The record gives the reactivity of an RNA of 177 nucleotides to DMS. The DMS profile rests on 990 reads. Reactivities are rounded to 0.1 and cut off at 0 and 3.
RNA sequence: GGGAACGACUCGAGUAGAGUCGAAAAGCGCGUGAGGGCGGUGACGAUUAUUUCUUGUAAAACAAAAUGAGGUCGUUGGCGAAGUCAAAAUGCUCACCGUGGUUUUGUUGAGGUACGCUCUGUGCGGCGAGGCUAAAUGAUUCGUCAUUUAGCCUCGAAAAGAAACAACAACAACAAC
Reactivity to DMS in 0.01 (KOAc 150mM, MgCl2 10mM, bicine 150mM(pH8.5), 24C), signal-to-noise 1, nucleotides 027 to 126: g020c010g010c060g000u000g030a070g000g010g000c010g010g030u000g000a030c070g030a100u010u000a110u010u000u010c090u010u000g000u010a040a070a100a200c060a030a020a040a040u010g000a130g000g010u000c090g050u000u000g030g020c000g000a060a120g030u010c170a020a060a090a070u020g010c030u000c030a050c050c030g000u000g020g000u000u000u000u000g000u000u010g020a100g000g000u000a050c050g000c020u000c090u020g000u010g020c040g000g000
DMS adducts were read by reverse transcription with MarathonRT.